[RMDB]
RNA sequence: GGGAACGACUCGAGUAGAGUCGAAAAGAUAUGGAUCGAUGGCAGCAACAGCGUGGUGUCGGAAACGACACACACGACAUGCUGCAUCGAUCCUAAGUCAAAUCAUAAACUGUUCGCAGUUUAUGAAUCCUAUAUUUCUGUUCGCAGAAAUAUAGGAAAAAGAAACAACAACAACAAC
Reactivity to 2A3 in 0.01 (KOAc 150mM, MgCl2 10mM, bicine 150mM(pH8.5), 24C), signal-to-noise 9, nucleotides 027 to 126: g010a010u020a010u040g000g000a000u000c010g010a010u040g300g300c030a000g000c060a110a270c050a240g010c010g000u010g000g000u000g010u000c000g000g000a010a000a000c010g010a000c000a010c110a040c010a000c020g030a010c030a220u300g000c000u000g000c000a000u010c000g000a000u020c000c000u000a000a000g000u000c000a040a040a230u040c000a000u000a000a010a000c000u010g070u110u140c300g000c170a010g000u000u010u010a010u010g010a010a090
Reactivity to DMS in 0.01 (KOAc 150mM, MgCl2 10mM, bicine 150mM(pH8.5), 24C), signal-to-noise 6, nucleotides 027 to 126: g010a020u000a040u010g000g000a010u000c010g000a010u000g010g040c000a010g020c010a140a090c230a110g010c010g020u000g010g010u000g010u000c010g010g010a010a010a020c000g010a010c000a000c010a070c000a000c000g010a020c060a300u020g010c000u000g000c000a010u000c000g000a000u000c000c000u000a000a060g000u000c000a140a150a180u000c010a000u000a000a000a010c000u000g010u000u010c250g030c010a010g010u000u000u000a000u000g010a030a110